The record gives the reactivity of an RNA of 177 nucleotides to 2A3 and DMS. 2A3 is a SHAPE reagent: it acylates the 2'-hydroxyl of flexible nucleotides of all four kinds. Conditions: 150 mM KOAc, 10 mM MgCl2 and 150 mM bicine (pH 8.5), 24 C. 2A3 adducts were read by reverse transcription with SuperScript II with manganese.
[RMDB]
RNA sequence: GGGAACGACUCGAGUAGAGUCGAAAAGAAAAUCCCAAGCAUAGCAUAGCAUAGCAUAGCAUAGCAUAGCAUAGCAUACCAUAGCAUAGCAUAGCAUAGCAUAGCAUAGCAUAGCAUACAAAAAAAACUAUUAUAAGGGAUUCGUCCCUUAUAAUAGAAAAGAAACAACAACAACAAC
Reactivity to 2A3 in 0.01 (KOAc 150mM, MgCl2 10mM, bicine 150mM(pH8.5), 24C), signal-to-noise 2, nucleotides 027 to 126: g040a010a060a000a040u010c010c000c000a020a000g080c020a030u140a040g010c020a040u070a030g000c000a040u110a020g010c020a020u030a030g020c010a040u050a010g010c010a030u040a030g010c010a030u040a040g060c000a020u020a090c070c010a010u030a010g010c000a020u030a020g030c010a030u010a050g010c000a020u030a030g010c010a020u070a010g000c000a000u030a010g000c000a010u020a050g030c010a010u080a090c140a080a100a050a010a000a040a040a020
Reactivity to DMS in 0.01 (KOAc 150mM, MgCl2 10mM, bicine 150mM(pH8.5), 24C), signal-to-noise 3, nucleotides 027 to 126: g010a130a130a130a130u000c000c000c000a100a120g020c060a040u000a060g030c070a070u010a080g010c060a060u000a060g000c040a040u000a050g010c040a030u000a090g020c030a030u000a050g000c050a020u000a070g010c080a050u010a060c020c060a050u000a030g000c030a020u010a040g010c040a040u000a100g000c060a060u000a080g000c030a050u000a070g000c040a050u000a040g000c020a040u000a070g020c050a050u020a030c080a030a000a000a060a070a100a090a200
The data come from the RNA Mapping Database (RMDB), library M2PK90.
The 2A3 profile rests on 2,925 reads.